[RMDB]
RNA sequence: GGGAACGACUCGAGUAGAGUCGAAAAGCGCUAUCCUCUACACCACCAACGGCGAUGAUCUGAUCGCUACCAUCGGCCUCGAUGACGUGGUGGUGGUGCGGGCUGAGGACGUGACCCUGGUGGUGCGUACAUGCACAUGAUUCGUCAUGUGCAUGUAAAAAGAAACAACAACAACAAC
Reactivity to DMS in 0.01 (KOAc 150mM, MgCl2 10mM, bicine 150mM(pH8.5), 24C), signal-to-noise 9, nucleotides 027 to 126: g020c090g010c090u000a140u000c020c020u000c080u010a170c020a010c000c000a010c010c010a050a100c220g010g000c020g020a030u000g000a110u010c140u000g000a060u000c010g020c010u000a090c040c000a010u000c010g030g020c080c080u000c060g000a150u010g010a140c080g020u000g010g030u000g010g030u000g000g000u000g010c060g010g000g010c150u000g000a130g000g010a060c080g010u000g000a090c050c010c020u000g010g020u000g010g010u000g010c110g010
Reactivity to 2A3 in 0.01 (KOAc 150mM, MgCl2 10mM, bicine 150mM(pH8.5), 24C), signal-to-noise 9, nucleotides 027 to 126: g060c040g000c070u060a050u080c010c010u010c020u030a020c010a000c010c000a010c000c000a080a070c060g020g000c030g060a050u050g050a220u060c050u110g040a030u040c000g000c020u080a020c010c000a020u030c010g140g040c040c030u110c050g160a210u210g110a140c080g040u030g000g010u010g020g000u000g000g000u010g020c070g010g070g000c080u070g030a040g020g030a020c010g020u050g110a200c000c000c000u010g030g000u020g020g010u030g030c030g010
The record gives the reactivity of an RNA of 177 nucleotides to DMS and 2A3. For 2A3 the reverse transcriptase was SuperScript II with manganese. Reactivities are rounded to 0.1 and cut off at 0 and 3. It was measured as part of the RMDB library OK2TST. The reactions ran in a buffer of 150 mM KOAc, 10 mM MgCl2 and 150 mM bicine (pH 8.5), at 24 C. High 2A3 reactivity points to a flexible backbone, as in loops and unpaired stretches.